[RMDB]
RNA sequence: GGGAACGACUCGAGUAGAGUCGAAAACGUACGUGGAGACACGUACGACGUGACUUCGGUCACGAAUUGAGGCAACUCCUGCGCCUCCCGCGCGAGGCGUCGGUGGUCGGCGAGCCCACGGACGCAAAAACUCGCGCGGAUAUAACUAGCAGGAGAAACCUGGACUGAUAUUCGUAUCAGUCCAGGUAAAAGAAACAACAACAACAAC
Reactivity to 2A3 in 0.01 (KOAc 150mM, MgCl2 10mM, bicine 150mM(pH8.5), 24C), signal-to-noise 1, nucleotides 027 to 156: c000g000u000a000c000g000u020g010g070a070g030a050c010a000c000g010u000a000c010g000a010c000g000u020g000a000c010u040u010c170g090g000u010c010a010c020g040a030a090u120u160g000a010g010g040c030a120a280c060u000c000c010u010g050c010g020c000c000u040c120c020c000g030c010g000c000g000a010g000g000c010g010u000c050g130g000u000g000g000u000c040g020g100c220g050a020g000c010c010c000a000c040g160g010a000c000g000c000a010a100a070a130a090c000u000c000g010c000g010c000g020g000a000u020a000u000a000a020c060u030a020g000c000a000g000g020a000g000a090a010

The record gives the reactivity of an RNA of 207 nucleotides to 2A3. Values are in units of 0.01, from 0 to 300, in steps of 10. For 2A3 the reverse transcriptase was SuperScript II with manganese. The RNA was probed in 150 mM KOAc, 10 mM MgCl2 and 150 mM bicine (pH 8.5) at 24 C.